[RMDB]
RNA sequence: GGGAACGACUCGAGUAGAGUCGAAAAGAUAUGGACAUUGGAACUACGUCGAAUCUAUGCGUACGAGGACGGUCGGAAACGACCGUCUACCCACCGUAUCAUAGAUUCGACGCCAAUGUCCUAAGUCGUACUAAACACAGUUCGCUGUGUUUAGUACAAAAGAAACAACAACAACAAC
Reactivity to 2A3 in 0.01 (KOAc 150mM, MgCl2 10mM, bicine 150mM(pH8.5), 24C), signal-to-noise 5, nucleotides 027 to 126: g060a040u190a070u260g000g010a000c010a010u010u040g040g010a190a090c170u260a080c300g000u010c000g020a010a000u000c000u010a010u010g070c160g060u010a010c000g000a020g000g000a000c010g000g010u000c020g030g030a120a110a030c000g000a010c030c000g000u000c000u000a020c010c010c010a050c020c020g010u010a010u030c000a000u000a010g010a010u000u000c000g000a000c000g000c000c000a000a000u010g000u000c000c000u000a000a000g000u020c050
Reactivity to DMS in 0.01 (KOAc 150mM, MgCl2 10mM, bicine 150mM(pH8.5), 24C), signal-to-noise 6, nucleotides 027 to 126: g000a080u010a300u000g010g010a010c010a010u010u000g010g000a120a060c150u020a300c010g020u000c010g000a020a010u000c000u000a010u000g010c300g030u000a010c020g000a110g010g010a010c010g020g010u000c000g000g000a100a080a300c010g010a000c000c010g000u000c000u000a000c030c050c090a300c110c010g000u000a010u010c000a010u010a000g000a020u000u000c000g010a010c010g000c010c010a000a010u000g000u000c000c000u000a010a070g000u000c110